[RMDB]
RNA sequence: GGGAACGACUCGAGUAGAGUCGAAAAGAACGAGGCCAGCAAGGUGCCCUCGCUGUCCAUGUGGUUCCACGACAUGCGCCCCUUCUACUCCUGCUGCUACUGGCAGGAGGAGCAGGCGGUGGGCUGACGACGCAUUUAUAUUCGUAUAAAUGCGUCGAAAAGAAACAACAACAACAAC
Reactivity to DMS in 0.01 (KOAc 150mM, MgCl2 10mM, bicine 150mM(pH8.5), 24C), signal-to-noise 6, nucleotides 027 to 126: g010a060a050c030g010a070g000g000c050c020a030g020c060a090a060g010g020u010g010c200c070c010u000c040g010c010u000g000u000c020c010a100u000g010u000g010g000u000u000c000c010a090c110g010a090c100a070u010g010c070g010c010c000c010c010u000u000c010u000a060c010u000c000c000u000g000c000u010g010c120u010a130c270u010g000g000c000a010g000g000a000g000g000a010g000c110a030g010g010c140g030g000u000g000g000g020c010u000g010a280
Reactivity to 2A3 in 0.01 (KOAc 150mM, MgCl2 10mM, bicine 150mM(pH8.5), 24C), signal-to-noise 4, nucleotides 027 to 126: g050a040a000c040g010a040g010g020c000c030a010g050c070a110a030g170g060u210g100c070c020c000u010c020g010c020u040g030u000c000c020a040u100g020u040g050g060u060u000c030c030a060c060g090a030c040a060u160g030c030g060c010c000c000c010u000u020c010u010a020c000u000c010c010u020g030c010u010g010c010u080a180c060u170g030g000c000a000g000g000a000g000g000a000g010c010a020g010g040c090g010g030u110g010g080g000c030u040g040a040
The record gives the reactivity of an RNA of 177 nucleotides to DMS and 2A3. The reactions ran in a buffer of 150 mM KOAc, 10 mM MgCl2 and 150 mM bicine (pH 8.5), at 24 C. It was measured as part of the RMDB library OK2TRN. For DMS the reverse transcriptase was MarathonRT.